RNA sequence: GGGAACGACUCGAGUAGAGUCGAAAAAGGCACUCCAUACCCUACUCCGACUCAAUACGUCCCCGUCGUACAGAAUGGUAACAUAUCUCUCCAAAUAUCUGAGCUUCGGUAUACGGGGAAACCCAACAAAAGCAAUUGUGGUUCGCCACAAUUGCAAGACUACGUCUACGUUCGCGUAGACGUAGUCAAAAGAAACAACAACAACAAC
Reactivity to 2A3 in 0.01 (KOAc 150mM, MgCl2 10mM, bicine 150mM(pH8.5), 24C), signal-to-noise 3, nucleotides 027 to 156: a010g090g000c060a040c050u060c000c000a050u110a110c010c000c020u040a050c030u030c040c040g020a000c000u000c070a070a180u090a160c060g090u050c050c030c010c010g000u020c060g020u020a010c010a030g040a020a080u080g020g100u180a200a020c030a030u180a200u080c060u010c000u010c080c050a100a200a110u200a170u040c060u110g020a030g080c020u050u070c010g010g010u000a020u000a030c010g010g000g000g040a000a020a010c020c000c000a040a080c020a040a170a000a000g000c000a000a000u000u000g000u010g000g040u000u030c130g020c070c000a000c000a000a000u010u000g010c000a000a010